Structure probing data (DMS and 2A3) for a 177-nucleotide construct. The DMS profile rests on 16,429 reads. Conditions: 150 mM KOAc, 10 mM MgCl2 and 150 mM bicine (pH 8.5), 24 C.

[RMDB]
RNA sequence: GGGAACGACUCGAGUAGAGUCGAAAAGAGGUGCUAACUACUCCUAACAUAAGUUAUAAGACUAGUGACCAGUGCAAAGAGACUGAAGUGAUAGGCAAUAGUGUCACUAGUGUUGAAGGAGCAGUUGGUAGUCCAUUAAGUUCGCUUAAUGGACUACAAAAGAAACAACAACAACAAC
Reactivity to DMS in 0.01 (KOAc 150mM, MgCl2 10mM, bicine 150mM(pH8.5), 24C), signal-to-noise 9, nucleotides 027 to 126: g010a120g020g020u000g000c060u000a020a020c000u000a030c010u000c000c010u000a080a110c090a170u010a110a130g010u000u000a130u010a090a080g000a030c000u000a010g010u000g000a010c000c010a120g010u000g010c010a030a060a110g010a210g010a070c080u000g020a100a120g010u000g000a150u010a090g000g000c010a040a080u000a070g030u010g010u010c000a010c000u000a010g000u000g010u000u000g010a160a040g010g000a020g030c020a000g010u000u000g010
Reactivity to 2A3 in 0.01 (KOAc 150mM, MgCl2 10mM, bicine 150mM(pH8.5), 24C), signal-to-noise 9, nucleotides 027 to 126: g090a040g040g110u140g060c030u020a000a010c000u010a010c000u000c010c000u040a100a020c030a100u240a160a060g130u220u160a150u040a260a060g070a030c010u000a000g000u000g000a000c000c010a040g030u020g030c030a050a150a040g090a060g040a050c050u200g080a200a040g120u080g110a120u110a090g080g000c010a020a050u110a180g130u190g000u100c000a000c010u000a000g010u010g030u020u040g030a050a020g000g000a010g000c000a000g000u020u020g000
For DMS the reverse transcriptase was MarathonRT.